Chemical mapping of a 177-nucleotide RNA with 2A3 and DMS. The RNA was probed in 150 mM KOAc, 10 mM MgCl2 and 150 mM bicine (pH 8.5) at 24 C. It was measured as part of the RMDB library OK1LIB. The DMS profile rests on 1,667 reads.
RNA sequence: GGGAACGACUCGAGUAGAGUCGAAAAGUGUUAUUGCUCGCGUUUUCAUGCGGACGGACAUGCAGGUACACACCCUUUAAAUGUGUUUCUGUGCAUGUAUUGCCGUUUAAACGAUCAUGCUGUCCUGCGGGAAAUAGAGCUUCGGCUCUAUUUCCCGAAAAGAAACAACAACAACAAC
Reactivity to 2A3 in 0.01 (KOAc 150mM, MgCl2 10mM, bicine 150mM(pH8.5), 24C), signal-to-noise 3, nucleotides 027 to 126: g000u020g050u090u090a080u110u050g040c000u010c050g000c030g100u140u020u070u140c180a110u210g000c010g030g030a050c060g050g000a040c020a040u020g000c020a020g010g060u050a000c010a000c000a010c020c040c000u060u180u180a080a080a070u110g000u000g030u030u120u000c010u080g300u090g030c010a000u030g000u030a140u020u280g090c000c020g000u000u010u110a020a060a020c000g000a020u090c010a050u100g000c010u040g020u020c010c040u080g060
Reactivity to DMS in 0.01 (KOAc 150mM, MgCl2 10mM, bicine 150mM(pH8.5), 24C), signal-to-noise 1, nucleotides 027 to 126: g000u020g000u000u000a030u000u010g060c040u010c010g000c080g070u000u000u000u000c270a050u040g000c080g000g000a080c000g000g040a010c010a000u050g000c000a190g000g010u000a000c000a020c030a000c030c070c080u010u010u040a000a290a080u030g040u000g010u010u080u000c000u040g000u020g000c000a030u030g030u000a050u050u000g080c010c000g000u000u010u000a060a140a100c000g000a110u010c070a010u000g000c010u020g000u000c000c020u010g000